Structure probing data (DMS and 2A3) for a 177-nucleotide construct. The RNA was probed in 150 mM KOAc, 10 mM MgCl2 and 150 mM bicine (pH 8.5) at 24 C.
[RMDB]
RNA sequence: GGGAACGACUCGAGUAGAGUCGAAAAGAUAUGGAUCUACGGAUCGCGAUAAGUCCCAGUCGGAAACGACUGAAGGACUUUUGACGCGGCACGUAGAUCCUAAGUCAAACUGAUCUUCGGAUCAGAAUCCAUGUCCUAUGUUCGCAUAGGACAUGGAAAAAGAAACAACAACAACAAC
Reactivity to DMS in 0.01 (KOAc 150mM, MgCl2 10mM, bicine 150mM(pH8.5), 24C), signal-to-noise 3, nucleotides 027 to 126: g010a030u000a300u010g020g000a010u000c000u000a020c010g000g020a020u000c000g010c000g020a160u010a010a010g040u020c000c000c000a010g020u000c000g010g000a140a090a260c000g000a020c000u010g010a190a140g010g000a010c010u000u000u010u000g020a270c070g020c000g010g000c300a010c010g000u000a010g000a010u000c000c000u000a010a080g000u000c020a130a040a250c010u000g000a000u000c000u000u010c260g040g010a010u000c000a000g000a110a140
Reactivity to 2A3 in 0.01 (KOAc 150mM, MgCl2 10mM, bicine 150mM(pH8.5), 24C), signal-to-noise 2, nucleotides 027 to 126: g050a010u090a050u140g010g010a000u000c000u010a000c020g050g000a060u030c000g010c010g080a090u020a120a020g010u000c000c020c000a010g000u000c010g020g040a130a070a060c030g010a010c020u020g070a150a160g020g000a010c000u070u060u050u090g110a050c110g000c000g010g070c030a010c030g000u000a010g010a000u010c010c000u000a000a000g010u000c030a040a010a170c030u010g010a000u000c020u040u110c300g130g010a010u000c010a010g040a010a060
2A3 adducts were read by reverse transcription with SuperScript II with manganese.
For DMS the reverse transcriptase was MarathonRT.
For 2A3, 4,937 sequencing reads were counted.